[RMDB]
RNA sequence: GGGAACGACUCGAGUAGAGUCGAAAAGCGGAGUCUAUGUCCAAGCACUACAAGACGCCCAUCCUGCUCAUCGAGUUCGAGCGCGACAAGGCCUUUGCGCUGCACGCCACCUCUGAGAUCGGCAGUGUCGUGAGUAUGAUUUCGAUCAUACUCACGAAAAAGAAACAACAACAACAAC
Reactivity to DMS in 0.01 (KOAc 150mM, MgCl2 10mM, bicine 150mM(pH8.5), 24C), signal-to-noise 5, nucleotides 027 to 126: g020c070g040g000a110g020u000c020u000a100u020g000u020c050c070a090a140g020c090a050c060u010a060c100a080a070g000a050c050g010c020c000c010a080u010c050c020u010g020c030u000c060a070u000c070g010a080g020u000u000c090g000a100g020c050g010c050g000a070c130a080a150g000g010c010c040u000u000u000g010c050g020c010u000g000c060a050c050g010c040c030a060c070c030u000c030u010g010a090g010a050u000c080g000g000c030a070g000u020g000
Reactivity to 2A3 in 0.01 (KOAc 150mM, MgCl2 10mM, bicine 150mM(pH8.5), 24C), signal-to-noise 5, nucleotides 027 to 126: g050c080g040g010a040g010u000c010u080a150u110g010u000c060c040a100a040g040c070a060c060u110a040c050a080a050g030a020c020g050c020c000c010a020u020c000c020u010g030c020u020c030a060u060c050g050a020g040u090u090c040g060a030g020c040g010c010g050a070c050a100a050g070g010c010c010u090u120u100g050c090g010c020u040g010c030a010c030g020c010c000a030c000c010u060c060u070g080a090g000a070u070c020g020g000c030a060g020u020g060